[RMDB]
RNA sequence: GGGAACGACUCGAGUAGAGUCGAAAAGAGCAACUUAGGAUUUUAGGCUCCCCGGUGCGUCUCGAACCGCGCCGGGCCAAACCCACAGGGGUUGGCGGUCCUGUGCGGUCAAAAUCUUUCCGCUGGAAUACCUAUCCCAGUUUCGACUGGGAUAGAAACACAUAAAGCUGUUCGCAGCUUUAUGUGUAAAAGAAACAACAACAACAAC
Reactivity to 2A3 in 0.01 (KOAc 150mM, MgCl2 10mM, bicine 150mM(pH8.5), 24C), signal-to-noise 2, nucleotides 027 to 156: g010a000g000c020a010a070c050u030u050a090g100g090a120u070u050u050u060a040g000g060c010u010c000c000c000c000g000g030u010g000c010g050u050c110u090c220g100a070a040c040c010g040c000g010c030c020g020g020g020c000c000a030a000a010c010c010c000a000c010a000g000g010g020g000u010u010g010g010c010g020g030u040c010c000u010g000u010g000c140g000g000u040c050a020a020a040a080u040c030u130u190u080c010c000g000c010u010g020g050a160a100u200a210c000c000u010a000u000c000c000c020a020g000u010u070u160c220g060a020c010u000g000g020g020a000u000a000g010a000a000
The record gives the reactivity of an RNA of 207 nucleotides to 2A3. 2A3 adducts were read by reverse transcription with SuperScript II with manganese. For 2A3, 917 sequencing reads were counted. The RNA was probed in 150 mM KOAc, 10 mM MgCl2 and 150 mM bicine (pH 8.5) at 24 C.